[RMDB]
RNA sequence: GGGAACGACUCGAGUAGAGUCGAAAAGAACGUUUGACAACACUCUGGGACCAAGUUUCGAUGGUUAUUUUUUUAUUUCCAUCGAUGUCUUUCACUGUACUUAGUUCCAAUUUAUAUUGCAAACAAGCUAGCACCGGUUGUUCGCAACCGGUGCUAGAAAAGAAACAACAACAACAAC
Reactivity to 2A3 in 0.01 (KOAc 150mM, MgCl2 10mM, bicine 150mM(pH8.5), 24C), signal-to-noise 1, nucleotides 027 to 126: g110a030a030c080g000u030u020u030g110a130c050a110a020c030a030c030u090c030u030g000g000g000a000c000c000a020a000g000u000u160u030c000g000a000u030g010g000u030u030a150u090u060u030u000u000u080u020a100u000u000u000c030c000a000u000c000g000a030u060g150u070c090u010u080u170c080a100c070u040g000u030a010c040u000u000a000g010u000u010c000c000a020a000u000u030u000a200u030a010u060u060g000c020a000a000a000c000a030a040g070
This 177-nucleotide RNA was probed chemically with 2A3. High 2A3 reactivity points to a flexible backbone, as in loops and unpaired stretches. The RNA was probed in 150 mM KOAc, 10 mM MgCl2 and 150 mM bicine (pH 8.5) at 24 C. The 2A3 profile rests on 506 reads.